This 177-nucleotide RNA was probed chemically with DMS and 2A3. Source: RMDB library OK2TST, as collected in RNAgym. For 2A3, 4,079 sequencing reads were counted. Values are in units of 0.01, from 0 to 300, in steps of 10. The reactions ran in a buffer of 150 mM KOAc, 10 mM MgCl2 and 150 mM bicine (pH 8.5), at 24 C. The DMS profile rests on 11,346 reads.

RNA sequence: GGGAACGACUCGAGUAGAGUCGAAAAUUUGCAGCCGUAUGUUGUGGCGUGAUGAUAAAAAAGUGAUGCGCGCGGAGCAAUUGAUGGAAGAAUUUACAUUACUUCAUCAAACAACACGUUUGGAUGCCGACUUUAACUUAUUCGUAAGUUAAAGUCGAAAAGAAACAACAACAACAAC
Reactivity to DMS in 0.01 (KOAc 150mM, MgCl2 10mM, bicine 150mM(pH8.5), 24C), signal-to-noise 7, nucleotides 027 to 126: u000u000u000g010c040a070g010c020c020g010u010a070u010g020u000u000g020u000g010g010c060g030u010g010a060u000g010a120u020a000a080a090a070a100a100g020u010g010a080u000g010c030g010c030g010c040g000g000a150g010c100a070a130u000u000g000a030u000g010g010a020a040g000a060a060u000u000u000a090c220a070u000u000a080c030u000u000c000a010u000c010a020a040a070c070a030a050c050a030c120g010u000u000u000g020g010a060u000g010c140
Reactivity to 2A3 in 0.01 (KOAc 150mM, MgCl2 10mM, bicine 150mM(pH8.5), 24C), signal-to-noise 4, nucleotides 027 to 126: u060u040u110g010c030a040g040c010c010g110u120a070u140g090u080u030g050u050g050g010c020g020u010g030a090u050g030a020u260a080a190a040a030a010a030g110u090g060a040u080g030c030g000c020g000c040g060g010a060g030c010a020a060u040u040g000a020u030g070g040a060a030g020a050a090u170u180u150a120c090a070u050u050a070c010u000u020c000a000u000c000a000a020a070c020a020a020c010a010c090g020u030u060u090g110g010a040u070g050c030